RNA sequence: GGGAACGACUCGAGUAGAGUCGAAAAGCUACGCUGAGCCCCUGCUCUCCUGGAAGUCUGGUAUUUUGGUAUUUUGGCAGGUGCCAGGCAGAGGGUGCCUAGGACCAGCCCCAUAAAGUCCCUGGGCGGUAAAUGAUGCUUUCGAGCAUCAUUUACCAAAAGAAACAACAACAACAAC
Reactivity to 2A3 in 0.01 (KOAc 150mM, MgCl2 10mM, bicine 150mM(pH8.5), 24C), signal-to-noise 1, nucleotides 027 to 126: g040c040u070a010c120g050c040u060g040a010g030c010c080c000c030u000g080c000u000c000u000c000c030u020g080g100a080a030g040u020c010u020g060g000u050a100u040u150u110u050g160g030u080a170u070u150u080u160g130g040c040a000g030g020u000g000c010c030a000g000g040c020a000g040a070g070g020g040u040g010c000c030u060a040g020g010a030c000c010a010g070c010c020c000c000a100u150a060a100a010g050u040c020c010c000u020g040g020g010c020
Reactivity to DMS in 0.01 (KOAc 150mM, MgCl2 10mM, bicine 150mM(pH8.5), 24C), signal-to-noise 2, nucleotides 027 to 126: g010c110u000a090c110g010c020u010g010a170g000c040c010c000c040u010g010c040u000c050u010c040c080u000g010g000a130a120g010u000c010u010g020g010u010a040u000u010u000u000g020g010u010a130u010u000u020u010g030g020c010a040g010g000u010g010c010c010a020g020g010c050a080g000a150g020g000g000u010g020c050c010u000a050g020g000a060c050c020a130g000c040c020c010c030a080u020a040a110a070g000u010c020c010c020u010g000g020g000c130